[RMDB]
RNA sequence: GGGAACGACUCGAGUAGAGUCGAAAAGAAGGUGAGAAAUUUGACUUACAAGGAGUCAGUGAGCUAAAGCAGUUGGAAGAGUUACGCAUUGAAUAUCCACGUGGGCAAAGGUUCUCUACUAAAACUGGGGUAAUGCACGAUUCGUCGUGCAUUACCCAAAAGAAACAACAACAACAAC
Reactivity to 2A3 in 0.01 (KOAc 150mM, MgCl2 10mM, bicine 150mM(pH8.5), 24C), signal-to-noise 2, nucleotides 027 to 126: g140a050a020g070g050u070g020a040g010a010a060a070u020u050u050g160a180c000u000u060a000c030a080a250g020g000a000g040u000c020a000g000u030g090a040g060c090u160a110a010a000g030c110a150g070u270u140g050g070a100a030g050a130g010u110u040a080c100g000c000a000u000u020g000a080a080u030a100u060c000c010a000c080g000u140g000g000g000c000a000a000a000g190g000u030u000c000u000c000u000a120c030u020a030a130a000a000c080u150g110
The record gives the reactivity of an RNA of 177 nucleotides to 2A3. Conditions: 150 mM KOAc, 10 mM MgCl2 and 150 mM bicine (pH 8.5), 24 C. High 2A3 reactivity points to a flexible backbone, as in loops and unpaired stretches. 2A3 adducts were read by reverse transcription with SuperScript II with manganese.